[RMDB]
This 207-nucleotide RNA was probed chemically with DMS and 2A3. The RNA was probed in 150 mM KOAc, 10 mM MgCl2 and 150 mM bicine (pH 8.5) at 24 C. Source: RMDB library RNAMAK, as collected in RNAgym. Values cover nucleotides 27 to 156. For DMS the reverse transcriptase was MarathonRT. The 2A3 profile rests on 1,233 reads.
RNA sequence: GGGAACGACUCGAGUAGAGUCGAAAAUCUGCCAUUCGUGGCAGAACUGUGGGGUCAUCCGAGGAGGAGGCGACGAUCUAUCUGAAGCCUCCACGGAUAGGGAGCCUCCCCGUUUGACGAUGACGGAGGCACCCGCGUCACGAUGUUCGCAUCGUAAGUGAAUAAGGAACUUCGGUUCCUUAUUCACAAAAGAAACAACAACAACAAC
Reactivity to DMS in 0.01 (KOAc 150mM, MgCl2 10mM, bicine 150mM(pH8.5), 24C), signal-to-noise 1, nucleotides 027 to 156: u010c000u010g000c010c000a130u010u000c220g040u000g030g010c000a020g000a010a030c080u000g000u000g000g040g020g030u000c110a090u000c000c030g020a210g010g010a100g010g060a060g000g020c000g000a170c150g020a150u000c090u000a100u020c110u000g010a050a300g020c020c000u010c000c010a020c000g000g000a100u010a030g010g000g050a240g020c000c020u000c000c000c000c000g030u020u000u000g050a120c160g000a050u000g020a120c080g020g030a020g060g000c020a060c010c040c030g010c030g030u010c040a080c000g010a080u000g000u000u000c300g020c060a130u020c010g020u000a080a210
Reactivity to 2A3 in 0.01 (KOAc 150mM, MgCl2 10mM, bicine 150mM(pH8.5), 24C), signal-to-noise 2, nucleotides 027 to 156: u010c000u010g060c000c000a040u090u130c300g110u070g020g010c020a020g040a040a010c010u070g030u060g080g020g020g000u050c020a010u000c010c000g010a040g110g100a170g020g040a000g030g040c000g050a060c030g020a060u070c040u230a080u060c060u170g030a140a010g020c000c050u020c000c000a020c000g010g000a000u010a070g000g020g010a040g000c000c000u000c000c040c010c000g030u070u160u230g110a080c080g040a050u080g000a050c030g030g020a020g030g000c000a080c000c010c000g100c070g110u090c050a030c000g010a000u030g080u090u170c230g060c080a020u070c010g020u010a140a100